Structure probing data (DMS) for a 207-nucleotide construct. The data come from the RNA Mapping Database (RMDB), library M2RFPK.

RNA sequence: GGGAACGACUCGAGUAGAGUCGAAAAUCAAUCGCAUUGUUGGGUGAAAGUUGGAGGAUAAAUCCUCACCAAGAUUUAAAUUAAGCAAGAGAUAUAAGGCCGCUCCUUAUAUUGCGACUUGCUGAAAGAUAUCCGGCAAAGUUCGCUUUGCCGGAAACAAUGGAUGUGUCUUCGGACACAUCCAUUGAAAAGAAACAACAACAACAAC
Reactivity to DMS in 0.01 (KOAc 150mM, MgCl2 10mM, bicine 150mM(pH8.5), 24C), signal-to-noise 1, nucleotides 027 to 156: u020c080a060a140u000c070g060c070a230u000u000g020u000u000g030g010g060u040g000a040a060a040g000u030u030g000g020a060g020g000a130u000a100a110a150u010c010c010u000c010a050c030c020a080a130g010a200u010u000u000a030a120a190u010u000a080a070g020c000a040a000g010a300g000a030u010a010u000a000a070g000g010c100c280g010c240u000c000c020u010u000a000u010a020u010u020g000c020g010a060c020u000u000g020c000u000g030a070a070a160g020a210u000a130u000c030c000g000g000c000a020a000a010g000u000u010c270g030c020u000u000u000g020c030c030g010g000a000a010a010

Background
Conditions: 150 mM KOAc, 10 mM MgCl2 and 150 mM bicine (pH 8.5), 24 C.